[RMDB]
RNA sequence: GGGAACGACUCGAGUAGAGUCGAAAAGAGCCGACAGAGAAGUCGGGAAGCGACGAGAGAGAAUAGAACACAUUGGAAUUCGAGAUACUGCCACAAAAUGACAGACGUCGCCAUAUUCUCCGAGAAGCAUUAAAUGGCUCUUCGGAGCCAUUUAAUGAAAAGAAACAACAACAACAAC
Reactivity to 2A3 in 0.01 (KOAc 150mM, MgCl2 10mM, bicine 150mM(pH8.5), 24C), signal-to-noise 6, nucleotides 027 to 126: g050a010g140c000c000g000a000c020a010g270a000g060a260a020g020u000c010g010g010g030a030a020g000c010g020a020c040g000a020g020a020g000a000g030a170a040u120a080g090a180a030c060a010c040a150u090u210g030g070a050a040u080u050c020g000a020g010a050u070a090c010u020g030c010c010a050c040a070a110a050a080u120g020a010c010a010g020a050c010g010u030c010g000c000c000a030u070a080u110u020c060u000c000c010g040a040g030a140a020g050
Reactivity to DMS in 0.01 (KOAc 150mM, MgCl2 10mM, bicine 150mM(pH8.5), 24C), signal-to-noise 5, nucleotides 027 to 126: g000a190g020c020c020g020a000c010a110g010a130g010a150a060g010u000c010g000g000g000a130a130g000c030g010a010c010g000a210g000a100g010a250g000a030a050u000a130g020a130a080c110a100c160a120u020u050g000g020a090a110u030u000c020g010a150g000a090u000a080c020u000g010c040c000a050c080a060a050a110a220u000g000a060c030a020g020a230c030g010u020c030g000c000c080a070u010a110u000u010c010u020c010c010g000a070g010a090a060g010

Chemical mapping of a 177-nucleotide RNA with 2A3 and DMS. Values cover nucleotides 27 to 126. The DMS profile rests on 7,919 reads. For 2A3, 4,014 sequencing reads were counted.